An RNA of 207 nucleotides, treated with 2A3 and read out base by base.
The data come from the RNA Mapping Database (RMDB), library OK3TST.
Conditions: 150 mM KOAc, 10 mM MgCl2 and 150 mM bicine (pH 8.5), 24 C.
[RMDB]
RNA sequence: GGGAACGACUCGAGUAGAGUCGAAAAACGUAGCUACCGUACGGAAACCAUCCGCCAUCCGAAACGUACGUUGAGCAUGCGAAAGGAUGGGUCCAUCCGAAACGUACGUCUUGAAUCACCCAUCCGAAACGUACGUCCGUACGGAAACCAUCCAACCAGUCUGUGAUACGUUCGCGUAUCACAGACUAAAAGAAACAACAACAACAAC
Reactivity to 2A3 in 0.01 (KOAc 150mM, MgCl2 10mM, bicine 150mM(pH8.5), 24C), signal-to-noise 2, nucleotides 027 to 156: a000c060g060u070a000g040c070u040a030c000c000g000u000a030c000g010g040a080a120a090c090c010a190u110c070c060g120c060c060a070u140c130c050g070a150a070a020c000g000u020a000c000g030u000u100g050a040g000c080a100u120g020c040g070a190a030a030g010g000a000u030g000g010g050u020c020c000a040u100c140c000g090a140a120a050c070g080u220a010c090g040u110c030u050u060g080a040a040u110c050a090c030c010c000a000u040c000c010g000a000a090a000c000g000u000a000c000g030u000c000c060g000u000a010c010g000g000a020a000a000c080c000a030u070c040c000a030a050c020c030